[RMDB]
RNA sequence: GGGAACGACUCGAGUAGAGUCGAAAACGGUAUUGGUCAAGGCUAUACCGACAGCGCACGUUCAAAAGGGCGCUUAAUCCCCGGCCAAGCGCCGAAAUAUGAAUAGACACCGCUGGGCUGGUAGGGCAAAACAUGGCGAUCUUCGGAUCGCCAUGAACUACCACUAUACCUUCGGGUAUAGUGGUAGAAAAGAAACAACAACAACAAC
Reactivity to 2A3 in 0.01 (KOAc 150mM, MgCl2 10mM, bicine 150mM(pH8.5), 24C), signal-to-noise 3, nucleotides 027 to 156: c020g010g030u050a030u040u180g050g020u060c070a130a110g070g000c000u020a010u010a050c010c000g020a020c020a020g000c000g000c000a040c080g050u140u110c040a050a080a070a040g020g000g010c000g010c020u010u010a020a030u000c000c000c000c000g000g020c010c000a030a020g030c030g010c050c050g070a040a070a000u220a080u130g100a050a030u050a090g020a040c040a020c050c020g020c030u010g010g080g000c010u020g030g050u050a050g030g020g040c050a060a020a050a070c000a000u000g000g000c010g000a010u000c000u020u090c190g080g000a010u000c010g000c000c000a020u000g000a000a000
Reactivity to DMS in 0.01 (KOAc 150mM, MgCl2 10mM, bicine 150mM(pH8.5), 24C), signal-to-noise 2, nucleotides 027 to 156: c020g020g020u000a040u000u000g100g020u000c070a080a140g040g010c020u000a070u000a040c030c020g030a130c070a030g000c020g050c010a080c070g040u000u000c090a100a150a190a230g000g000g020c020g000c010u000u000a060a080u000c010c010c000c000g040g030c070c080a090a070g010c030g020c020c030g020a040a050a090u000a150u000g000a110a200u020a120g000a190c050a070c090c020g010c010u010g020g010g040c030u000g000g030u000a010g010g030g060c040a130a120a050a250c000a020u000g000g010c010g000a020u000c000u000u000c300g030g030a020u000c000g020c010c000a000u000g000a010a140
The record gives the reactivity of an RNA of 207 nucleotides to 2A3 and DMS.
Reactivities are given for positions 27 through 156.
For 2A3 the reverse transcriptase was SuperScript II with manganese.
The DMS profile rests on 4,049 reads.
Conditions: 150 mM KOAc, 10 mM MgCl2 and 150 mM bicine (pH 8.5), 24 C.
It was measured as part of the RMDB library M2RFOK.